About this RNA:
This 177-nucleotide RNA was probed chemically with 2A3 and DMS. For 2A3 the reverse transcriptase was SuperScript II with manganese. The RNA was probed in 150 mM KOAc, 10 mM MgCl2 and 150 mM bicine (pH 8.5) at 24 C. The 2A3 profile rests on 824 reads.
RNA sequence: GGGAACGACUCGAGUAGAGUCGAAAAUCUAUUAUAUAGGCGAUAACAUUGAUGCGUUUUUUGAUGAGCUUGUAGAACAAUUAAAUCUAUAUAUGGAUAUAUUGCCAAAAGGCGAUCAAACAUUUGACUAAAUACGGGAGUUCGCUCCCGUAUUUAGAAAAGAAACAACAACAACAAC
Reactivity to 2A3 in 0.01 (KOAc 150mM, MgCl2 10mM, bicine 150mM(pH8.5), 24C), signal-to-noise 2, nucleotides 027 to 126: u000c000u010a080u190u030a080u030a030u030a070g010g010c010g060a050u090a130a130c070a150u110u120g070a100u130g050c050g020u060u000u010u010u060u220g250a260u090g080a030g080c030u070u090g040u080a060g070a120a040c020a020a000u070u100a150a010a080u010c030u020a040u000a010u020a010u150g000g000a010u020a000u010a030u120u010g010c010c000a000a240a000a220g010g000c030g000a020u040c020a000a110a020c060a080u080u080u150g030a040
Reactivity to DMS in 0.01 (KOAc 150mM, MgCl2 10mM, bicine 150mM(pH8.5), 24C), signal-to-noise 1, nucleotides 027 to 126: u000c000u000a010u000u000a040u000a080u010a010g010g000c080g010a070u000a050a160c130a060u000u010g000a060u000g010c130g030u000u070u000u000u000u000g030a090u030g000a100g000c000u030u000g020u000a100g000a100a230c000a030a100u010u010a040a100a060u000c010u000a030u060a050u020a010u000g000g000a050u000a080u060a030u000u000g020c020c010a120a110a100a090g000g030c000g000a000u000c070a120a000a040c230a030u010u000u050g000a290

Source information
For DMS, 1,511 sequencing reads were counted.